Notes: The record gives the reactivity of an RNA of 177 nucleotides to DMS. Values cover nucleotides 27 to 126. Source: RMDB library OK2TRN, as collected in RNAgym.
RNA sequence: GGGAACGACUCGAGUAGAGUCGAAAAAGGAUGGGCAACACCUGCAGCGAGCCUAAGGUGGGAGCUCCCCACAUCUAUUCCAAGGUUGUGAGCCCCUCUGAAAAGGAUGGUGAGAGUGGAGUGUACAACUGUAGCUUUUCUUCGGAAAAGCUACAGUAAAAGAAACAACAACAACAAC
Reactivity to DMS in 0.01 (KOAc 150mM, MgCl2 10mM, bicine 150mM(pH8.5), 24C), signal-to-noise 2, nucleotides 027 to 126: a120g000g000a020u010g010g000g000c010a250a110c070a050c020c030u000g020c160a040g020c070g010a070g010c090c070u000a080a070g010g040u000g000g030g000a170g010c120u020c030c020c040c020a010c050a070u000c060u000a150u000u010c080c080a110a050g010g000u000u000g040u000g000a140g030c020c030c010c040u010c020u010g000a040a030a050a110g000g010a040u000g000g000u000g000a130g000a080g020u020g030g010a070g040u000g030u000a110c120a030